[RMDB]
RNA sequence: GGGAACGACUCGAGUAGAGUCGAAAAUUCGCGACGGCGGCGAGCGCGAGAUGCGCCAGAUCCGUGACCGCGCGCAGCGUGAGCUGGACCGGUUGGAGGACAUCUGGAGCACUUUCACCAAGCUGGCCAUGGUGUGUUUAUUCGUAAACACACCAUGAAAAGAAACAACAACAACAAC
Reactivity to 2A3 in 0.01 (KOAc 150mM, MgCl2 10mM, bicine 150mM(pH8.5), 24C), signal-to-noise 8, nucleotides 027 to 126: u050u000c010g000c000g010a030c020g040g060c010g010g010c020g030a140g020c010g000c010g010a020g010a040u030g000c010g000c010c000a010g010a020u000c030c070g270u180g010a020c010c000g050c010g000c060g020c100a000g000c010g050u110g060a040g000c000u030g010g130a110c010c000g010g060u020u020g120g150a260g020g030a030c030a120u000c010u010g000g010a010g000c000a010c050u080u090u040c170a220c140c010a030a030g010c010u110g140g010c010
Reactivity to DMS in 0.01 (KOAc 150mM, MgCl2 10mM, bicine 150mM(pH8.5), 24C), signal-to-noise 9, nucleotides 027 to 126: u010u000c010g010c020g010a060c070g010g010c020g010g010c010g010a160g010c030g010c020g000a030g010a090u000g010c000g010c000c000a020g000a040u000c010c010g000u010g010a010c010c000g010c200g030c110g010c000a010g010c000g010u020g000a250g000c000u000g010g000a050c040c010g010g000u000u000g010g010a250g010g000a080c170a070u000c010u000g000g000a030g000c010a030c100u000u000u000c040a180c030c030a080a140g000c020u000g010g020c110
This 177-nucleotide RNA was probed chemically with 2A3 and DMS. The 2A3 profile rests on 21,817 reads. The DMS profile rests on 22,320 reads. The RNA was probed in 150 mM KOAc, 10 mM MgCl2 and 150 mM bicine (pH 8.5) at 24 C.